Source information: An RNA of 177 nucleotides, treated with 2A3 and DMS and read out base by base. The reactions ran in a buffer of 150 mM KOAc, 10 mM MgCl2 and 150 mM bicine (pH 8.5), at 24 C. For DMS the reverse transcriptase was MarathonRT. For DMS, 7,074 sequencing reads were counted. The data come from the RNA Mapping Database (RMDB), library M2PK50.
RNA sequence: GGGAACGACUCGAGUAGAGUCGAAAAAGAAUCUCCUUCGGGAGAUUCUGAACCACUAAGCUGAUUGCGGAUGACGACGAGGCAGCUCGUGUGGAGCAACCACCGAGAACAGGUUCGCCUGUUCUAACACCUAACGCUAAUUCGUUAGCGUUAGGUGAAAAGAAACAACAACAACAAC
Reactivity to 2A3 in 0.01 (KOAc 150mM, MgCl2 10mM, bicine 150mM(pH8.5), 24C), signal-to-noise 4, nucleotides 027 to 126: a000g000a010a000u010c000u010c000c020u010u090c190g080g000g000a000g000a000u000u000c000u000g000a000a020c000c000a010c050u060a060a020g030c010u020g050a110u070u200g100c050g050g050a090u170g110a070c030g010a020c010g010a040g060g100c020a010g000c020u020c050g160u160g010u020g030g030a050g040c030a030a080c010c030a030c040c070g150a040g000a020a000c000a000g010g030u040u040c160g040c040c010u010g020u030u030c000u010a070a020
Reactivity to DMS in 0.01 (KOAc 150mM, MgCl2 10mM, bicine 150mM(pH8.5), 24C), signal-to-noise 6, nucleotides 027 to 126: a000g000a020a010u000c000u000c000c000u010u010c180g050g010g020a010g000a010u000u000c000u010g000a100a130c010c000a060c100u000a120a070g030c030u000g000a100u010u010g010c040g010g010a100u010g010a130c150g000a060c040g010a040g010g000c070a050g000c030u000c040g010u000g010u000g000g010a120g010c140a090a140c010c020a080c130c110g010a060g000a020a010c010a010g010g000u010u000c280g010c000c000u010g000u000u000c010u000a100a170